[RMDB]
RNA sequence: GGGAACGACUCGAGUAGAGUCGAAAAGCCCAGCAGUGACCAGGCCAGAUCCAGCCGCGGGUCGCCGAUCGUGGUCAUCGCCCAGUCCACAAUCGCGGCCAGUCGGGCGGGUUCCCCGUGGGCGAACCGUAGUACCGGCUUUCGAGCCGGUACUACGAAAAGAAACAACAACAACAAC
Reactivity to 2A3 in 0.01 (KOAc 150mM, MgCl2 10mM, bicine 150mM(pH8.5), 24C), signal-to-noise 2, nucleotides 027 to 126: g010c000c000c030a010g030c050a020g060u120g050a030c020c050a070g050g000c000c040a030g000a100u040c020c020a030g060c050c050g040c110g010g000g000u020c000g000c020c030g010a020u020c040g000u000g010g000u050c050a070u090c030g000c000c000c000a000g010u020c020c000a000c000a020a010u010c020g000c010g090g000c000c010a010g040u070c090g010g030g030c000g030g010g000u040u030c000c000c000c030g090u090g000g000g000c010g010a030a020c040
Reactivity to DMS in 0.01 (KOAc 150mM, MgCl2 10mM, bicine 150mM(pH8.5), 24C), signal-to-noise 1, nucleotides 027 to 126: g000c020c000c040a180g000c090a150g140u000g000a000c010c030a130g000g020c000c060a110g000a130u010c030c080a010g000c120c100g030c010g000g000g010u020c020g080c080c000g000a040u010c100g000u000g030g000u010c010a030u000c140g030c020c000c060a210g000u030c020c000a000c060a080a020u000c020g000c000g010g000c000c020a150g030u010c000g000g010g000c000g020g010g050u000u000c000c040c000c300g010u000g100g020g010c000g000a100a120c150
An RNA of 177 nucleotides, treated with 2A3 and DMS and read out base by base. It was measured as part of the RMDB library OK1LIB.